The record gives the reactivity of an RNA of 177 nucleotides to DMS and 2A3. Values cover nucleotides 27 to 126. 2A3 is a SHAPE reagent: it acylates the 2'-hydroxyl of flexible nucleotides of all four kinds. Source: RMDB library OK1LIB, as collected in RNAgym.
[RMDB]
RNA sequence: GGGAACGACUCGAGUAGAGUCGAAAAUCCAGCGACAAGACAACAAAGCGACGGACGGCUUUUCCGCGCCGUGCCUAGCUGGAGAGCCUGCAGCUCCUCACCGGAAAUCGCUUUGCGGCUACGGAGAAGCUCCCUACGAGUUCGCUCGUAGGGAGCUAAAAGAAACAACAACAACAAC
Reactivity to DMS in 0.01 (KOAc 150mM, MgCl2 10mM, bicine 150mM(pH8.5), 24C), signal-to-noise 1, nucleotides 027 to 126: u020c010c000a000g170c000g000a130c070a080a000g000a140c300a200a150c200a020a210a080g000c030g060a040c300g010g000a050c200g000g000c300u000u060u010u110c160c000g040c220g110c090c000g050u000g040c050c000u000a070g000c020u000g000g000a040g020a000g000c000c000u000g010c070a000g000c000u000c000c050u000c240a160c060c000g000g000a040a030a080u000c000g000c010u000u000u000g000c000g000g030c040u000a000c050g000g000a030g000a260
Reactivity to 2A3 in 0.01 (KOAc 150mM, MgCl2 10mM, bicine 150mM(pH8.5), 24C), signal-to-noise 2, nucleotides 027 to 126: u030c000c000a000g000c030g050a060c100a190a010g110a090c080a170a040c020a020a160a000g010c030g060a060c050g030g070a030c040g000g030c060u240u140u210u190c100c030g090c000g000c070c040g050u100g010c000c020u020a010g000c000u010g010g000a050g010a010g080c010c100u080g010c050a020g000c020u010c000c010u010c010a010c000c030g020g060a000a090a000u040c030g040c120u030u040u190g040c000g020g020c010u040a040c020g020g000a040g050a020